RNA sequence: GGGAACGACUCGAGUAGAGUCGAAAAUGGACAGAGACACCGACAUGCUCUCUUCUGGGCAGAGACACUCGUUCAUGGGCAGCUACAAAGUGGCCAUCAACAGGAACACCCUCAGACUGGAGGCAGCCCUUAGGUCUGUUUUCGAACAGACCUAAGGAAAAGAAACAACAACAACAAC
Reactivity to DMS in 0.01 (KOAc 150mM, MgCl2 10mM, bicine 150mM(pH8.5), 24C), signal-to-noise 4, nucleotides 027 to 126: u000g000g010a050c060a070g010a090g010a040c120a040c030c040g020a110c170a130u020g010c060u000c010u000c220u000u010c120u000g000g010g000c050a050g000a130g010a080c100a070c060u000c080g020u000u000c060a040u000g020g000g040c040a050g000c060u000a080c150a040a090a120g010u010g000g010c020c050a040u010c080a020a080c060a050g010g000a070a050c050a100c060c030c010u000c050a090g010a090c080u000g000g000a080g000g000c100a060g000c110
Reactivity to 2A3 in 0.01 (KOAc 150mM, MgCl2 10mM, bicine 150mM(pH8.5), 24C), signal-to-noise 3, nucleotides 027 to 126: u080g010g000a000c060a070g070a030g020a040c020a010c070c040g050a060c030a100u080g020c020u000c000u000c000u190u060c070u070g000g020g000c030a010g030a010g020a060c000a030c060u050c020g030u050u020c010a010u030g010g030g000c020a050g030c030u050a060c090a070a230a030g080u050g050g010c010c000a040u070c040a010a080c010a040g040g000a030a010c030a040c030c020c000u040c000a040g030a160c030u090g050g000a010g000g040c000a030g030c000
Source: RMDB library OK2TST, as collected in RNAgym. Chemical mapping of a 177-nucleotide RNA with DMS and 2A3. Values cover nucleotides 27 to 126. The reactions ran in a buffer of 150 mM KOAc, 10 mM MgCl2 and 150 mM bicine (pH 8.5), at 24 C. DMS adducts were read by reverse transcription with MarathonRT.